[RMDB]
RNA sequence: GGGAACGACUCGAGUAGAGUCGAAAACACGCUAGCUGCUCUCUGCGUCCUACGUUCAGAAACCGAACUCGAUGAUUCAGAAUACGUGCAGGAAGAUAACGGGAAAACACCGGCAGGUCAAAUCAUUGCCGCAGCUGUAGCAGCCUGUCCGGACAGGGACAGUGGUAGAAUUCGUUCUACCACUGUCAAAAGAAACAACAACAACAAC
Reactivity to DMS in 0.01 (KOAc 150mM, MgCl2 10mM, bicine 150mM(pH8.5), 24C), signal-to-noise 3, nucleotides 027 to 156: c040a050c040g010c030u010a090g030c010u010g000c000u010c010u000c010u000g020c020g020u000c010c020u010a130c080g020u000u010c030a130g010a140a170a100c100c060g010a040a050c020u000c030g040a140u000g010a090u000u000c040a090g000a100a110u000a060c050g010u010g020c040a090g030g020a070a080g000a110u010a080a180c050g000g010g010a090a080a090a140c070a090c030c010g010g010c010a030g010g010u000c040a080a120a130u000c110a060u010u000g020c060c010g020c020a100g030c060u020g030u000a020g000c020a080g020c020c010u010g010u000c010c000g010g010a080c100a090g010g000
Reactivity to 2A3 in 0.01 (KOAc 150mM, MgCl2 10mM, bicine 150mM(pH8.5), 24C), signal-to-noise 8, nucleotides 027 to 156: c070a000c030g050c040u070a050g010c000u010g000c000u000c000u010c000u030g000c010g040u080c020c040u100a100c070g020u010u030c020a060g160a250a140a100c080c080g010a020a030c020u020c060g060a070u080g000a020u050u050c060a050g050a100a080u120a130c070g040u070g010c010a030g040g060a070a040g050a060u110a140a060c040g010g020g030a050a060a040a030c070a030c020c000g000g010c030a020g000g050u040c030a020a030a100u060c030a070u050u100g050c040c020g020c010a010g010c080u050g050u110a010g010c000a000g000c000c000u020g030u040c020c020g030g060a060c050a060g080g020